[RMDB]
RNA sequence: GGGAACGACUCGAGUAGAGUCGAAAAAUUAGCUGCCUAAGCUAGCAAAUGCGGUUCCGCCCUCCAUCGCCCAUGUGGUAGGUGUCGGGACUCACUUUUAGUGGGCUACGCCUCUCACCCUCCGUCUGUGGGUGAAGGAAGAGAUUUAUCAGACUAGGAGACUCAUAUCGUUCGCGAUAUGAGUCUCAAAAGAAACAACAACAACAAC
Reactivity to 2A3 in 0.01 (KOAc 150mM, MgCl2 10mM, bicine 150mM(pH8.5), 24C), signal-to-noise 1, nucleotides 027 to 156: a000u090u040a050g000c010u030g040c010c050u100a060a040g020c000u080a030g050c070a010a000a210u250g020c170g070g010u020u070c000c010g000c020c000c000u020c020c000a010u000c030g010c000c010c000a020u030g010u000g070g070u100a050g000g000u070g140u290c030g000g000g000a040c080u070c030a230c020u120u080u080u180a060g010u010g000g000g000c000u020a000c030g000c000c010u050c000u000c000a000c000c000c000u040c000c000g010u000c000u000g020u000g000g020g000u020g000a000a000g030g000a000a000g000a000g000a020u000u040u270a120u110c000a000g000a020c050u000a060g160

Description:
The record gives the reactivity of an RNA of 207 nucleotides to 2A3. Source: RMDB library RSTRND, as collected in RNAgym. Conditions: 150 mM KOAc, 10 mM MgCl2 and 150 mM bicine (pH 8.5), 24 C.